Overview: This 207-nucleotide RNA was probed chemically with 2A3.
RNA sequence: GGGAACGACUCGAGUAGAGUCGAAAACUGGAGCCAUUCCUAUUCGGCCAUCUUGAAACGAUCUCAAAAUGCUACUUUCAUAUACGUAUUUUAUCUGCAACUGAACUUCUUCAUUCGUAUAUUAUUUUUCAGUCCAGAAGGGAUUACUGUAGGGCUAAGCAGCUAUCCCAUUCGUGGGAUAGCUGCUAAAAGAAACAACAACAACAAC
Reactivity to 2A3 in 0.01 (KOAc 150mM, MgCl2 10mM, bicine 150mM(pH8.5), 24C), signal-to-noise 2, nucleotides 027 to 156: c030u020g000g010a010g070c190c000a140u120u040c000c000u010a030u060u100c080g010g010c000c010a090u060c010u010u010g050a090a030a050c040g030a050u000c020u000c050a110a060a040a040u120g020c030u030a110c010u060u130u110c030a010u110a030u030a090c020g060u010a110u010u110u030u040a060u060c040u130g020c080a110a090c040u140g030a030a070c010u110u070c030u210u130c070a120u050u070c040g070u020a020u010a010u050u080a120u060u190u010u050u110c040a000g010u010c020c000a030g000a090a050g100g000g020a110u020u190a150c100u110g020u040a030g000g060g000c010u000a020
The 2A3 profile rests on 538 reads. 2A3 adducts were read by reverse transcription with SuperScript II with manganese.